[RMDB]
RNA sequence: GGGAACGACUCGAGUAGAGUCGAAAACACGCGGGCAGGAACGUGGCAGGCCGCAGAGGGUUGCCAUUCAUUCCUCGUGCGGUUCAACAACAUGGUCCAAGAAAACCAACACCGUUCGCGGUGUUGGCGAGCUUGAAAGGUUCGCCUUUCAAGCUCGAAAAGAAACAACAACAACAAC
Reactivity to 2A3 in 0.01 (KOAc 150mM, MgCl2 10mM, bicine 150mM(pH8.5), 24C), signal-to-noise 2, nucleotides 027 to 126: c140a020c000g020c040g040g070g020c090a020g000g030a010a040c000g010u050g030g000c020a030g040g030c000c010g000c080a050g080a090g120g070g130u040u030g000c090c010a050u140u110c000a020u060u040c010c020u000c020g140u050g020c030g000g020u030u140c040a100a060c010a020a040c000a090u130g070g010u000c010c010a030a030g070a040a070a000a000c010c000a000a000c010a000c000c010g010u020u040c130g000c010g120g010u000g000u000u000g000g000
Reactivity to DMS in 0.01 (KOAc 150mM, MgCl2 10mM, bicine 150mM(pH8.5), 24C), signal-to-noise 2, nucleotides 027 to 126: c010a130c050g020c020g010g000g020c240a030g000g010a070a030c110g070u000g000g020c020a070g000g020c020c000g010c200a100g000a190g000g000g000u000u010g000c130c120a040u000u000c050a100u000u000c000c010u010c000g040u020g030c010g000g000u020u000c070a130a050c090a010a040c080a110u010g010g000u000c020c030a160a110g010a080a060a070a240c000c000a000a030c030a010c010c010g020u000u020c230g030c010g040g010u010g020u000u000g000g000

This 177-nucleotide RNA was probed chemically with 2A3 and DMS. The reactions ran in a buffer of 150 mM KOAc, 10 mM MgCl2 and 150 mM bicine (pH 8.5), at 24 C. For 2A3, 1,702 sequencing reads were counted. 2A3 adducts were read by reverse transcription with SuperScript II with manganese.